[RMDB]
RNA sequence: GGGAACGACUCGAGUAGAGUCGAAAAGAGCUCGGCUUGAGGGCCUAGUAGCCAGCGGCGUCAUAUUCCUGAUCCCUUUACCGAUUUGGCCGUCGGCUUGUGAGGUUAGGGAAAAACCAUGACUAGCGUUGCGUAUCUAGUUCGCUAGAUACGCAACAAAAGAAACAACAACAACAAC
Reactivity to DMS in 0.01 (KOAc 150mM, MgCl2 10mM, bicine 150mM(pH8.5), 24C), signal-to-noise 1, nucleotides 027 to 126: g010a140g020c000u000c070g050g000c010u000u000g020a060g000g000g060c020c020u020a060g010u000a070g000c020c000a090g010c040g010g050c090g000u000c070a030u010a210u000u000c000c000u000g000a040u000c070c030c010u000u000u000a020c020c020g000a210u000u010u000g000g000c050c060g000u020c000g030g030c060u000u020g000u000g010a180g020g000u000u010a060g000g000g000a010a050a070a110a090c160c110a030u000g010a090c040u000a080g020c210
Reactivity to 2A3 in 0.01 (KOAc 150mM, MgCl2 10mM, bicine 150mM(pH8.5), 24C), signal-to-noise 1, nucleotides 027 to 126: g100a000g010c020u000c060g010g000c060u050u060g080a140g080g030g000c010c020u030a030g070u050a020g010c000c070a050g000c070g010g000c000g060u070c010a030u040a070u100u020c000c000u010g010a060u010c000c000c000u030u120u050a030c010c000g030a060u150u010u080g030g010c030c000g130u120c080g000g010c020u120u130g040u020g060a060g000g010u030u070a030g000g000g000a030a030a000a000a000c050c010a110u080g050a050c050u020a000g050c030